Record summary:
Structure probing data (2A3) for a 177-nucleotide construct. The RNA was probed in 150 mM KOAc, 10 mM MgCl2 and 150 mM bicine (pH 8.5) at 24 C.
[RMDB]
RNA sequence: GGGAACGACUCGAGUAGAGUCGAAAACUACUUCGAGAGCUACACGUUGAAGCCAGGCGACUCUAUACAACUGCCCGGCGGGAAACUACUCGUAUUCGAGGGUUACGAGUACGGCGUAAUAGAGGAGUGAGUGAGGCCAGUUCGCUGGCCUCACUCAAAAAGAAACAACAACAACAAC
Reactivity to 2A3 in 0.01 (KOAc 150mM, MgCl2 10mM, bicine 150mM(pH8.5), 24C), signal-to-noise 1, nucleotides 027 to 126: c060u080a080c000u100u140c000g050a020g000a000g020c070u070a010c050a040c220g060u020u010g130a000a000g010c110c000a040g030g030c000g070a070c010u000c050u020a150u150a210c280a230a230c000u120g040c000c110c060g010g000c110g010g000g000a080a150a000c000u000a000c000u000c000g000u110a070u130u300c000g110a040g060g220g000u000u130a000c020g000a000g010u010a090c040g000g000c010g020u020a130a220u020a080g020a000g020g000a000g000